Structure probing data (2A3) for a 177-nucleotide construct.
Source: RMDB library OK1LIB, as collected in RNAgym.
RNA sequence: GGGAACGACUCGAGUAGAGUCGAAAAGCACAUACGAAUACGGUGAUCGUCAUAUGUGGAUUAACCACAAUUUGGGAUAUGACGGUAUUAAAUUAAUUGAGCCUAUUUGUAAUCUCAGACUUUGUGACCCCAUGUCCGAAUUCGUUCGGACAUGGGGAAAAGAAACAACAACAACAAC
Reactivity to 2A3 in 0.01 (KOAc 150mM, MgCl2 10mM, bicine 150mM(pH8.5), 24C), signal-to-noise 4, nucleotides 027 to 126: g120c080a070c000a110u100a000c050g000a000a000u050a020c200g000g000u040g060a010u020c000g000u000c000a000u030a020u180g010u020g000g010a040u080u300a220a190c000c000a030c030a080a140u210u290u300g100g020g040a020u050a000u010g000a000c020g010g010u000a020u020u100a020a070a050u130u300a010a080u110u090g070a010g010c000c000u000a000u060u010u030g040u000a040a040u040c040u000c040a080g040a240c030u000u120u130g120u120g090a120
For 2A3 the reverse transcriptase was SuperScript II with manganese.